Source: RMDB library M2PK50, as collected in RNAgym. The record gives the reactivity of an RNA of 177 nucleotides to DMS and 2A3. Reactivities are given for positions 27 through 126. For DMS the reverse transcriptase was MarathonRT. The reactions ran in a buffer of 150 mM KOAc, 10 mM MgCl2 and 150 mM bicine (pH 8.5), at 24 C.
[RMDB]
RNA sequence: GGGAACGACUCGAGUAGAGUCGAAAAGAAGUUGUGUUCGCACAACUUCAAAAGCUAGUAGGAACUGGGCAAGUAGUACCUAGUAGUAGCCCGUUCAAGUAAAAAUCAACCUCUUCGGAGGUUGAAAGAAUUCCAAGAUGUUCGCAUCUUGGAAUUCAAAAGAAACAACAACAACAAC
Reactivity to DMS in 0.01 (KOAc 150mM, MgCl2 10mM, bicine 150mM(pH8.5), 24C), signal-to-noise 2, nucleotides 027 to 126: g000a010a000g030u010u000g010u010g010u000u010c180g070c000a020c000a010a000c000u010u010c000a020a080a140a150g000c010u000a000g000u000a030g010g000a090a020c000u000g020g020g020c220a130a130g020u040a050g020u000a050c010c000u020a000g000u000a030g020u000a080g000c000c000c010g020u000u040c160a110a110g000u000a010a070a060a110a090u010c000a020a000c000c000u000c000u000u000c140g030g000a020g000g020u000u000g010a010a020a090
Reactivity to 2A3 in 0.01 (KOAc 150mM, MgCl2 10mM, bicine 150mM(pH8.5), 24C), signal-to-noise 1, nucleotides 027 to 126: g010a000a010g000u000u000g000u010g000u030u120c180g040c060a010c000a000a000c040u000u000c000a000a020a000a010g010c000u030a030g040u010a010g040g030a040a000c040u050g070g210g050c200a190a100g110u060a000g020u020a150c010c020u050a070g050u010a000g030u030a030g100c050c000c000g030u150u120c030a070a000g040u080a030a130a070a010a010u010c010a000a000c020c010u020c000u070u070c110g090g000a000g000g000u000u000g000a000a000a010